[RMDB]
RNA sequence: GGGAACGACUCGAGUAGAGUCGAAAAGUUUGCCUACGUGCUAGUAGUAACAAGGAGCUAUCUUAGGUGCAUGGUGAUCAUUAGCAUUAAUGCAGUUCCACGUGCAUAUCAAUAUCCAAAUAGGGCCCGACUCUCAGAAUUUCGAUUCUGAGAGUCGAAAAGAAACAACAACAACAAC
Reactivity to DMS in 0.01 (KOAc 150mM, MgCl2 10mM, bicine 150mM(pH8.5), 24C), signal-to-noise 2, nucleotides 027 to 126: g020u000u000u000g010c050c020u020a090c130g000u000g030c060u000a030g000u000a030g000u010a070a090c100a050a110g000g030a090g000c060u000a040u010c060u010u010a060g030g020u000g020c020a050u000g000g030u000g000a080u000c060a080u000u020a090g020c040a070u010u000a080a070u000g000c090a080g010u000u000c080c020a020c060g050u020g000c020a020u000a090u010c060a070a090u020a090u000c010c040a030a090a090u010a150g000g000g000c140c110
Reactivity to 2A3 in 0.01 (KOAc 150mM, MgCl2 10mM, bicine 150mM(pH8.5), 24C), signal-to-noise 1, nucleotides 027 to 126: g020u010u090u120g070c010c000u070a120c060g000u080g020c050u040a070g040u040a010g010u060a100a070c050a100a090g000g010a030g080c020u000a030u120c050u030u120a060g010g110u000g070c010a030u050g060g020u060g010a040u010c040a080u070u140a010g000c000a020u000u180a150a110u200g030c000a000g020u000u080c010c000a020c010g030u040g090c040a030u040a000u080c010a020a120u010a070u180c010c020a030a030a160u050a050g060g010g030c080c030
Source information:
An RNA of 177 nucleotides, treated with DMS and 2A3 and read out base by base. For 2A3, 990 sequencing reads were counted. Conditions: 150 mM KOAc, 10 mM MgCl2 and 150 mM bicine (pH 8.5), 24 C. 2A3 adducts were read by reverse transcription with SuperScript II with manganese.